Record summary:
Structure probing data (2A3 and DMS) for a 207-nucleotide construct. For 2A3 the reverse transcriptase was SuperScript II with manganese. For DMS the reverse transcriptase was MarathonRT.
[RMDB]
RNA sequence: GGGAACGACUCGAGUAGAGUCGAAAAAUCUAACCGCACUGAGUUCGCUCUCGCUGCCUGAUUUUUAGUCAGGAUUAACCAGUGAGCAGCCGCUCCGUUCACUCCUCCUCGUCUUUGGGAGGAUGCUGAGCGUCGUUUAGAAGACUUGCUGAUGCAGCCUUAUAUACGUGUUCGCACGUAUAUAAGGAAAAGAAACAACAACAACAAC
Reactivity to 2A3 in 0.01 (KOAc 150mM, MgCl2 10mM, bicine 150mM(pH8.5), 24C), signal-to-noise 6, nucleotides 027 to 156: a000u070c040u040a040a050c010c010g040c060a070c120u040g000a010g010u130u160c060g020c000u000c000u000c010g000c010u030g050c010c000u010g010a040u050u070u070u100u260a060g010u000c000a010g010g040a020u100u140a060a040c030c000a000g010u000g010a000g010c030a000g010c000c020g000c010u000c000c000g010u000u010c010a010c010u000c000c000u000c000c000u040c030g070u020c070u030u050u040g000g000g000a000g000g000a000u020g000c130u000g010a000g010c010g020u080c020g010u040u050u060a030g000a040a000g020a040c030u110u090g020c030u110g030a130u200g040c040a010g030
Reactivity to DMS in 0.01 (KOAc 150mM, MgCl2 10mM, bicine 150mM(pH8.5), 24C), signal-to-noise 2, nucleotides 027 to 156: a100u000c010u010a080a300c060c010g040c080a080c090u010g010a030g030u000u000c040g040c000u010c010u000c010g020c050u000g000c000c030u030g000a030u010u000u000u010u040a150g010u000c030a040g020g000a120u000u010a140a140c300c030a060g010u000g000a040g040c090a060g040c020c060g000c010u000c000c020g000u030u000c010a050c010u000c000c000u010c000c010u000c170g000u000c090u000u000u010g000g000g000a040g000g000a000u000g030c130u000g010a030g020c000g010u010c080g020u000u000u000a060g020a090a190g010a040c020u000u000g030c000u000g010a100u000g010c030a190g010
Description: The data come from the RNA Mapping Database (RMDB), library ARCHII. As a SHAPE reagent, 2A3 marks flexible, mostly unpaired nucleotides at the ribose 2'-OH. For DMS, 5,131 sequencing reads were counted.